[RMDB]
RNA sequence: GGGAACGACUCGAGUAGAGUCGAAAACUCCAUUGCUUCGGCAAUGGAGAAACAGGACGUGUGACCGAAACGGAGGUAGGUCCAACUACCUUCUCACAAAAAAAACGCUUAGGUUCGCCUAAGCGAACCCUUAGACAUACUUCGGUAUGUCUAAGGGAAAAGAAACAACAACAACAAC
Reactivity to 2A3 in 0.01 (KOAc 150mM, MgCl2 10mM, bicine 150mM(pH8.5), 24C), signal-to-noise 6, nucleotides 027 to 126: c000u000c000c000a010u000u000g010c000u040u050c190g130g000c000a000a000u000g010g000a000g010a010a010a010c060a030g040g090a040c080g130u120g060u080g090a050c030c050g080a160a070a040c130g020g000a010g010g000u000a000g010g040u040c070c010a060a090c000u010a010c000c000u020u010c030u040c010a060c090a000a050a020a010a010a010a010a020c020g000c010u010u000a000g030g040u050u040c250g050c040c000u000a010a010g000c000g000a000a000
Reactivity to DMS in 0.01 (KOAc 150mM, MgCl2 10mM, bicine 150mM(pH8.5), 24C), signal-to-noise 6, nucleotides 027 to 126: c000u000c000c000a000u000u000g010c010u010u020c210g040g010c000a000a020u000g010g000a010g010a010a030a070c130a110g020g000a070c140g020u000g020u010g000a140c080c020g000a060a080a120c220g000g010a010g010g020u000a010g000g000u000c220c170a070a190c010u000a010c000c000u000u000c020u000c090a060c090a000a000a020a040a040a060a150a150c000g010c000u000u000a000g000g010u000u000c260g010c000c000u010a000a010g000c000g000a010a040
This 177-nucleotide RNA was probed chemically with 2A3 and DMS. For DMS the reverse transcriptase was MarathonRT. The data come from the RNA Mapping Database (RMDB), library M2PK50. For 2A3, 18,097 sequencing reads were counted.